[RMDB]
The record gives the reactivity of an RNA of 177 nucleotides to DMS. The RNA was probed in 150 mM KOAc, 10 mM MgCl2 and 150 mM bicine (pH 8.5) at 24 C. It was measured as part of the RMDB library OK1LIB.
RNA sequence: GGGAACGACUCGAGUAGAGUCGAAAAUAAAGAGCUCCGUAGGCGGCUUUGUUGCGACAGCUGUGAAAAUCUCGUCUCUCAAUUGUAGGCUUUGCAGCUUGAUACGGGCGGGCCUUGAGAUUUGGUAAAUUUUAAUAAAAUUCGUUUUGUUAAAAUUAAAAGAAACAACAACAACAAC
Reactivity to DMS in 0.01 (KOAc 150mM, MgCl2 10mM, bicine 150mM(pH8.5), 24C), signal-to-noise 2, nucleotides 027 to 126: u000a080a130a220g000a300g000c020u010c080c090g020u010a100g010g030c090g000g000c040u000u030u050g000u000u000g010c010g000a070c100a020g020c020u010g000u000g010a090a040a080a100u010c040u010c010g000u010c050u000c010u010c090a050a060u010u010g000u010a020g000g000c010u000u000u030g000c000a030g000c000u000u010g000a140u010a050c090g000g000g000c010g000g000g000c020c010u000u010g000a070g010a060u000u020u010g000g000u010a070